[RMDB]
RNA sequence: GGGAACGACUCGAGUAGAGUCGAAAAGACUCCGUUAAUAAUUGCAGACUUAACCCCAACGGAUGCUCUAGCAAUUUUUCUCUGGUUACCUGCUAGUUAAGAUUUAACCAGAGCAUCCCACUAUCCGGGAUAAUGGAUAGUCCCAGCUCUGAGGGUUCUACUAGUUUGGGUUCGCCCAAACUAGUAGAAAAGAAACAACAACAACAAC
Reactivity to 2A3 in 0.01 (KOAc 150mM, MgCl2 10mM, bicine 150mM(pH8.5), 24C), signal-to-noise 1, nucleotides 027 to 156: g050a010c040u000c000c020g010u000u040a140a050u130a240a100u300u140g020c050a070g010a130c070u100u130a050a160c000c000c000c000a000a000c000g010g000a000u030g000c050u000c000u030a020g040c020a110a120u000u000u000u300u070c020u000c010u000g000g000u020u000a040c020c020u020g000c020u050a060g000u070u190a030a030g020a180u180u040u160a000a000c020c000a000g000a000g000c010a020u040c020c000c000a090c020u000a010u000c000c000g000g000g010a030u150a100a040u170g000g000a000u000a000g000u000c000c000c000a020g010c160u100c070u060g030a080g000g030g000u050u010
Source: RMDB library ARCHII, as collected in RNAgym. Chemical mapping of a 207-nucleotide RNA with 2A3. The reactions ran in a buffer of 150 mM KOAc, 10 mM MgCl2 and 150 mM bicine (pH 8.5), at 24 C.